About this RNA: An RNA of 177 nucleotides, treated with DMS and 2A3 and read out base by base. Conditions: 150 mM KOAc, 10 mM MgCl2 and 150 mM bicine (pH 8.5), 24 C.
RNA sequence: GGGAACGACUCGAGUAGAGUCGAAAAGAUAUGGAUUACAAUACGACGAUAAGCGUCAACUCGGAAACGAGUUACGCUUUUGACGUCGUUGUAAUCCUAAGUCAAAAGCUUUCGUUCGCGAAAGCAAGCCAUGCUGUAACUUCGGUUACAGCAUGGCAAAAGAAACAACAACAACAAC
Reactivity to DMS in 0.01 (KOAc 150mM, MgCl2 10mM, bicine 150mM(pH8.5), 24C), signal-to-noise 1, nucleotides 027 to 126: g010a050u000a190u010g000g000a040u000u010a040c000a020a110u000a070c110g020a030c020g010a130u010a060a000g000c000g000u000c300a030a020c000u000c010g000g000a000a020a080c030g080a030g020u000u000a020c020g010c000u010u000u000u020g010a120c140g040u000c020g000u010u000g030u000a000a000u000c010c000u000a010a120g000u000c010a120a080a130a130g000c000u000u000u000c000g010u020u020c300g000c010g000a000a020a000g020c000a110a050
Reactivity to 2A3 in 0.01 (KOAc 150mM, MgCl2 10mM, bicine 150mM(pH8.5), 24C), signal-to-noise 1, nucleotides 027 to 126: g010a000u020a040u110g000g000a010u000u000a000c010a030a100u180a280c060g020a010c020g140a150u080a300a000g000c030g020u060c140a010a000c000u020c000g000g000a000a050a010c010g000a000g000u000u000a010c010g000c060u030u000u000u100g250a100c070g000u000c000g000u000u010g000u010a010a010u000c010c000u010a020a000g010u020c040a010a010a180a160g030c010u000u010u000c030g050u010u190c300g000c010g130a000a000a000g010c000a010a010
For DMS, 1,269 sequencing reads were counted. Source: RMDB library TTRDES, as collected in RNAgym. High 2A3 reactivity points to a flexible backbone, as in loops and unpaired stretches. The 2A3 profile rests on 2,471 reads.